[RMDB]
RNA sequence: GGGAACGACUCGAGUAGAGUCGAAAAUAAAAUUGAUGUGUAGGAUAGGUGGGAGGCUUUGAAGUGUGGACGCCAGUCUGCAUGGAGCCGACCUUGAUAUACCACCCUUUAAUGAAAAGAAAAAAAACAAUGCUGUAUACUUCGGUAUACAGCAUUGAAAAGAAACAACAACAACAAC
Reactivity to DMS in 0.01 (KOAc 150mM, MgCl2 10mM, bicine 150mM(pH8.5), 24C), signal-to-noise 2, nucleotides 027 to 126: u010a030a020a070a110u000u000g000a070u000g060u010g030u010a030g020g020a070u000a010g010g050u000g030g010g020a290g000g000c010u000u010u010g010a110a110g010u000g000u000g010g000a020c010g010c170c240a120g010u000c000u000g030c000a000u000g000g010a000g000c000c000g000a080c010c010u000u030g000a170u000a080u010a050c000c040a060c010c030c050u000u000u020a070a090u010g000a060a030a080a100g010a030a010a000a030a090a070a090a120
Reactivity to 2A3 in 0.01 (KOAc 150mM, MgCl2 10mM, bicine 150mM(pH8.5), 24C), signal-to-noise 1, nucleotides 027 to 126: u100a020a040a000a050u060u060g070a090u120g060u050g030u050a070g060g060a050u020a010g060g060u060g050g100g080a120g010g020c000u200u200u120g090a040a010g020u020g000u030g010g000a000c020g020c040c000a020g010u000c020u000g000c010a010u020g000g030a010g000c000c000g010a010c000c000u000u000g040a020u050a010u020a190c010c010a000c020c010c000u040u190u230a170a160u140g080a050a060a040a040g110a150a100a050a010a000a060a000a010